Conditions: 150 mM KOAc, 10 mM MgCl2 and 150 mM bicine (pH 8.5), 24 C. Chemical mapping of a 177-nucleotide RNA with 2A3 and DMS. The DMS profile rests on 3,321 reads. For DMS the reverse transcriptase was MarathonRT. The data come from the RNA Mapping Database (RMDB), library M2PK50.
[RMDB]
RNA sequence: GGGAACGACUCGAGUAGAGUCGAAAAGCUGAGAAAUUCGUUUCUCAGCACUGGAAAUAAAGCCGAAAGGCUAGCCAUUCCUUAUUUGGCGAAAGCGUGGCAUGAGCCUCCACUUCGGUGGAGGCAACCACUGCAUCAAAUUCGUUUGAUGCAGUGGAAAAGAAACAACAACAACAAC
Reactivity to 2A3 in 0.01 (KOAc 150mM, MgCl2 10mM, bicine 150mM(pH8.5), 24C), signal-to-noise 3, nucleotides 027 to 126: g000c000u000g000a000g040a010a070a010u100u100c190g050u020u000u010c000u010c000a000g000c000a020c020u040g040g110a040a090a110u210a130a200a020g000c000c010g020a080a020a010g040g000c000u000a000g000c000c000a020u040u080c020c000u100u130a180u120u120u090g060g000c040g020a050a000a020g050c060g040u080g050g010c090a080u110g070a020g020c000c000u000c000c000a010c000u020u080c220g040g000u010g000g000a010g000g000c000a000a000
Reactivity to DMS in 0.01 (KOAc 150mM, MgCl2 10mM, bicine 150mM(pH8.5), 24C), signal-to-noise 3, nucleotides 027 to 126: g000c000u000g010a010g000a020a030a030u000u010c210g000u000u000u000c000u000c000a010g010c000a010c130u000g000g020a070a080a080u010a080a110a080g010c000c000g000a080a070a130g010g010c010u000a050g020c010c030a070u000u010c060c010u000u010a120u010u000u000g000g020c010g010a100a050a070g000c120g020u010g000g020c090a110u020g000a150g000c010c000u000c000c000a010c000u000u020c150g020g030u000g010g000a010g020g010c000a000a020